[RMDB]
RNA sequence: GGGAACGACUCGAGUAGAGUCGAAAAGAUAUGGAGCAAGAGCGAUAAGUCGCACUCGGAAACGAGUGUCGACUUUUGACGUGAGUGCUCCUAAGUCAAAACCGAGAUGGCUUCGGCCAUCUCGGAAGACAAUAUCUGUCUUCGGACAGAUAUUGUCAAAAGAAACAACAACAACAAC
Reactivity to DMS in 0.01 (KOAc 150mM, MgCl2 10mM, bicine 150mM(pH8.5), 24C), signal-to-noise 4, nucleotides 027 to 126: g010a030u000a300u000g020g010a010g010c000a030a040g000a300g010c000g010a100u000a020a020g010u000c000g000c000a000c000u000c000g000g010a080a060a180c010g020a010g020u010g010u010c000g030a000c000u000u000u000u000g020a100c090g000u000g000a240g010u000g010c000u000c000c000u010a030a100g000u010c030a070a050a110a140c000c000g000a010g000a020u000g010g010c000u010u010c260g010g010c010c000a000u000c000u000c010g010g000a020a010
Reactivity to 2A3 in 0.01 (KOAc 150mM, MgCl2 10mM, bicine 150mM(pH8.5), 24C), signal-to-noise 4, nucleotides 027 to 126: g020a000u050a020u100g000g000a010g000c010a040a050g060a030g130c030g050a100u070a270a020g000u000c000g000c010a010c000u010c000g010g000a050a050a030c010g010a000g000u000g020u030c010g000a000c000u010u000u020u030g060a000c000g050u090g050a200g230u020g000c000u000c000c000u010a100a020g040u010c040a020a050a080a110c000c010g000a000g000a000u000g020g000c060u130u130c300g120g000c020c000a000u010c000u000c000g000g000a010a000